[RMDB]
RNA sequence: GGGAACGACUCGAGUAGAGUCGAAAAGGUAUCCACUUCGGUGGAUACCAAAGGGGAUCCCAGCAUCAGGGAACAACAACAAUAGAUGCAUCCCUAACGCCAAAAUUCCGGAUUUCGAUCCGGAAAAGAUUUUACUAGGAUUCGUCCUAGUAAAAUCAAAAGAAACAACAACAACAAC
Reactivity to 2A3 in 0.01 (KOAc 150mM, MgCl2 10mM, bicine 150mM(pH8.5), 24C), signal-to-noise 3, nucleotides 027 to 126: g000g000u000a000u000c000c000a010c000u030u040c180g100g000u010g000g010a010u000a000c000c000a030a050a010g000g010g000g000a020u040c020c000c030a020g010c000a010u030c020a020g030g050g130a110a100c040a060a010c010a040a000c000a050a180u080a160g020a020u020g000c010a050u040c020c000c000u030a080a030c060g070c040c040a090a110a030a060u050u000c010c000g000g010a020u060u050u090c170g030a010u000c000c000g000g000a020a000a000a010
Reactivity to DMS in 0.01 (KOAc 150mM, MgCl2 10mM, bicine 150mM(pH8.5), 24C), signal-to-noise 3, nucleotides 027 to 126: g020g020u000a000u000c000c000a000c010u000u010c170g010g000u010g020g010a020u000a000c010c000a000a020a080g010g030g000g010a280u000c020c010c010a100g010c040a020u000c070a090g000g010g010a050a070c080a060a070c150a060a090c110a070a090u000a090g020a040u010g010c040a230u000c000c000c020u000a060a100c130g020c040c120a050a040a110a150u000u000c000c000g000g000a040u000u010u020c130g010a040u000c000c000g000g000a000a000a040a100